[RMDB]
RNA sequence: GGGAACGACUCGAGUAGAGUCGAAAAACCUUUGUGCGUGAUGGAGCUCCUUUGUCAGUCCACGAUGAAGGAUGUCCCAUUGGGACAUCUGGAGUGGACUUGGAUUUAAGGAGCGAUGAAAUCACGCACUCUGGUAAAACUUCCGUUCGCGGAAGAAGUAUAAUCGUUGAUUCGUCAACGAUUAUACAAAAGAAACAACAACAACAAC
Reactivity to 2A3 in 0.01 (KOAc 150mM, MgCl2 10mM, bicine 150mM(pH8.5), 24C), signal-to-noise 7, nucleotides 027 to 156: a000c000c000u010u010u010g000u000g000c000g000u000g000a000u010g010g020a010g000c000u000c000c000u000u000u010g010u010c000a000g000u000c000c000a030c090g300a300u020g010a010a000g000g000a010u000g000u000c000c020c090a270u140u300g000g000g000a000c000a010u010c000u030g000g000a000g000u000g000g000a000c010u000u020g000g000a000u220u120u230a000a000g010g000a000g000c000g000a000u000g000a000a000a010u010c000a000c000g000c000a000c000u000c000u000g000g000u000a030a040a060a110c000u000u000c010c000g020u040u080c300g000c020g130g010a010a010g010a050a010
Reactivity to DMS in 0.01 (KOAc 150mM, MgCl2 10mM, bicine 150mM(pH8.5), 24C), signal-to-noise 2, nucleotides 027 to 156: a030c010c000u000u000u000g010u010g000c010g050u000g010a020u000g020g010a200g010c000u010c010c000u000u000u000g010u000c010a060g020u000c000c020a030c000g030a180u010g010a290a300g000g000a030u000g010u000c010c010c000a300u000u020g060g010g010a030c000a010u000c000u000g000g000a120g020u000g000g010a000c000u010u000g010g010a030u000u000u000a010a030g010g020a030g010c010g010a010u010g010a110a080a030u000c000a010c000g010c010a000c010u000c020u010g010g030u000a020a050a070a140c010u000u000c000c000g010u010u000c290g000c030g030g020a020a020g000a050a170
Description
Structure probing data (2A3 and DMS) for a 207-nucleotide construct. Reactivities are rounded to 0.1 and cut off at 0 and 3. It was measured as part of the RMDB library RNAMAK. For DMS the reverse transcriptase was MarathonRT. The reactions ran in a buffer of 150 mM KOAc, 10 mM MgCl2 and 150 mM bicine (pH 8.5), at 24 C.